[RMDB]
RNA sequence: GGGAACGACUCGAGUAGAGUCGAAAAGCGAGGGUGGCGCGGGCGCCGAAACUGCCGUCGGACUGCAUGAGCGGCAGGGAAUGGCCUUCCUCGAACACCAUGCGGUCCACCUGGUUGGCCAGGUCGAGCAGGACUAUCGAUUCGUCGAUAGUCCUGCAAAAGAAACAACAACAACAAC
Reactivity to DMS in 0.01 (KOAc 150mM, MgCl2 10mM, bicine 150mM(pH8.5), 24C), signal-to-noise 1, nucleotides 027 to 126: g000c020g020a030g010g010g010u000g040g000c010g050c110g030g060g030c230g000c040c030g020a030a190a120c040u010g000c010c030g000u010c150g000g000a070c010u000g000c050a020u000g020a140g020c040g010g000c020a070g000g000g020a060a060u030g020g040c110c110u000u000c010c010u000c080g000a100a180c100a100c100c000a020u000g010c030g000g000u000c020c000a090c010c000u000g020g010u000u010g000g000c040c010a030g000g000u000c120g000a150
Reactivity to 2A3 in 0.01 (KOAc 150mM, MgCl2 10mM, bicine 150mM(pH8.5), 24C), signal-to-noise 1, nucleotides 027 to 126: g030c030g040a050g020g090g000u100g000g120c080g050c040g030g000g070c000g050c000c020g040a010a020a000c010u030g000c050c010g050u060c040g030g080a080c050u060g000c090a050u070g100a070g180c000g000g020c000a020g030g000g060a000a210u130g040g020c010c010u080u090c020c010u000c050g040a040a020c020a020c020c010a000u060g030c000g010g040u010c000c000a020c050c010u000g010g040u080u220g040g110c080c000a000g050g000u030c080g000a010
The record gives the reactivity of an RNA of 177 nucleotides to DMS and 2A3. For 2A3, 1,279 sequencing reads were counted. It was measured as part of the RMDB library OK2TST. The reactions ran in a buffer of 150 mM KOAc, 10 mM MgCl2 and 150 mM bicine (pH 8.5), at 24 C. As a SHAPE reagent, 2A3 marks flexible, mostly unpaired nucleotides at the ribose 2'-OH.